[RMDB]
Chemical mapping of a 207-nucleotide RNA with 2A3 and DMS. In probing experiments dimethyl sulfate is read out at A N1 and C N3, which are open when not base-paired. Source: RMDB library RNAMAK, as collected in RNAgym. Conditions: 150 mM KOAc, 10 mM MgCl2 and 150 mM bicine (pH 8.5), 24 C. DMS adducts were read by reverse transcription with MarathonRT. The 2A3 profile rests on 3,950 reads.

RNA sequence: GGGAACGACUCGAGUAGAGUCGAAAAAUAAAAGGUUCGCCUUUUAUAACGCUCCUAAGUCCGAGAUGACGUAGGGACAUGCUUAUCGGAAACGAUAAGCAACAGCCCUACUGUCAUCGAUGAGGAUAUGGAAUGAUGCAGUUGUUCGCAACUGCAAAAAGAAGCAUUACUUCGGUAAUGCUUCUUUAAAAGAAACAACAACAACAAC
Reactivity to 2A3 in 0.01 (KOAc 150mM, MgCl2 10mM, bicine 150mM(pH8.5), 24C), signal-to-noise 4, nucleotides 027 to 156: a000u030a000a000a010a000g040g000u040u110c240g180c000c000u020u000u000u040a080u030a100a050c070g030c060u020c010c000u040a130a090g010u000c000c000g030a020g000a120u000g000a010c000g000u000a010g000g000g020a050c010a110u030g000c000u000u000a010u000c000g010g040a050a040a100c040g000a010u000a000a000g020c000a000a010c030a010g000c020c000c000u000a000c010u020g000u010c000a010u010c000g000a020u060g080a030g000g000a000u020a050u100g030g020a100a100u150g070a100u140g050c000a010g000u030u010g030u050u160c210g010c140a010a010c000u010g000c030a000a000
Reactivity to DMS in 0.01 (KOAc 150mM, MgCl2 10mM, bicine 150mM(pH8.5), 24C), signal-to-noise 3, nucleotides 027 to 156: a060u000a000a000a010a020g030g020u000u000c300g030c030c000u000u000u010u000a010u000a090a130c060g020c040u000c010c010u000a080a220g010u000c000c020g010a170g010a040u000g010a010c000g020u000a010g000g010g000a040c090a300u010g010c000u000u000a000u010c000g010g010a150a120a300c010g010a010u000a010a010g000c000a010a010c060a140g000c000c000c000u000a010c000u010g030u000c000a000u000c000g010a050u000g010a230g010g010a070u010a220u000g020g000a140a110u000g010a170u000g010c000a020g020u000u000g010u000u000c250g040c010a020a070c010u000g020c010a000a000